RNA sequence: GGGAACGACUCGAGUAGAGUCGAAAAGGGAAUGGUGGUUUACCCCGUUGUCAAAUGAUUACCGACCAAUAAUUGGCGAAACUCGUUUCGCGUUGGCUGCCUAAUUCAAGGAAUUAGCGUGCCUUCAAAGACAUCAAGAAGUUCGCUUCUUGAUGAAUCCUAUUAGGGUCUUCGGACCCUAAUAGGAAAAAGAAACAACAACAACAAC
Reactivity to 2A3 in 0.01 (KOAc 150mM, MgCl2 10mM, bicine 150mM(pH8.5), 24C), signal-to-noise 1, nucleotides 027 to 156: g030g040g000a150a080u160g010g060u050g010g100u070u040u200a140c010c000c010c000g040u040u080g060u040c040a030a100a180u090g040a100u070u150a070c070c030g040a060c020c030a020a020u070a260a050u080u120g060g000c010g000a010a020a020c010u060c120g100u020u010u000c110g000c000g010u010u020g000g000c020u070g000c040c000u000a030a000u000u030c120a180a050g150g040a040a030u000u000a000g080c040g060u080g000c000c040u000u000c020a050a080a000g090a070c040a010u010c000a000a000g010a010a000g000u060u060c040g030c060u010u040c000u000u050g000a000u000g010a000a040
Reactivity to DMS in 0.01 (KOAc 150mM, MgCl2 10mM, bicine 150mM(pH8.5), 24C), signal-to-noise 2, nucleotides 027 to 156: g010g010g020a120a080u000g000g050u000g010g020u000u000u000a130c010c000c020c070g010u020u000g020u000c020a080a120a200u010g000a270u000u000a030c010c020g010a040c010c000a120a110u010a030a090u000u000g000g000c000g020a050a070a070c050u010c100g010u000u000u000c000g040c020g010u010u000g000g060c000u010g000c140c000u000a000a040u000u000c020a190a150g010g020a040a030u000u010a020g010c040g020u000g010c020c010u000u000c020a040a140a130g000a170c010a000u000c000a010a020g000a010a010g010u000u010c300g010c000u000u000c010u000u000g010a000u000g000a030a060

Background
Source: RMDB library M2RFPK, as collected in RNAgym. Chemical mapping of a 207-nucleotide RNA with 2A3 and DMS. The reactions ran in a buffer of 150 mM KOAc, 10 mM MgCl2 and 150 mM bicine (pH 8.5), at 24 C. The DMS profile rests on 3,638 reads. For 2A3, 448 sequencing reads were counted.